[RMDB]
RNA sequence: GGGAACGACUCGAGUAGAGUCGAAAAGAUAUGGAUUCGUGGAGAACCGUGCCGAGGACCUAAGUAUUGGUCGGAAACGACCAAUACUUAGGUUACAGCACGGGUUCGUUGAAACGAAUCCUAAGUCCUCUGACUAUUUGUUCGCAAAUAGUCAGAGAAAAGAAACAACAACAACAAC
Reactivity to DMS in 0.01 (KOAc 150mM, MgCl2 10mM, bicine 150mM(pH8.5), 24C), signal-to-noise 2, nucleotides 027 to 126: g020a090u000a300u010g000g010a020u000u000c000g010u030g010g000a130g000a010a030c000c000g000u000g020c010c000g010a300g000g000a010c010c000u000a000a010g000u000a010u000u000g010g000u000c000g020g000a070a090a300c000g020a010c000c000a020a010u000a000c000u000u000a010g010g000u000u000a000c000a020g010c000a010c010g000g020g000u000u000c010g000u010u000g000a140a150a000c000g000a000a010u000c010c000u010a030a100g000u000c050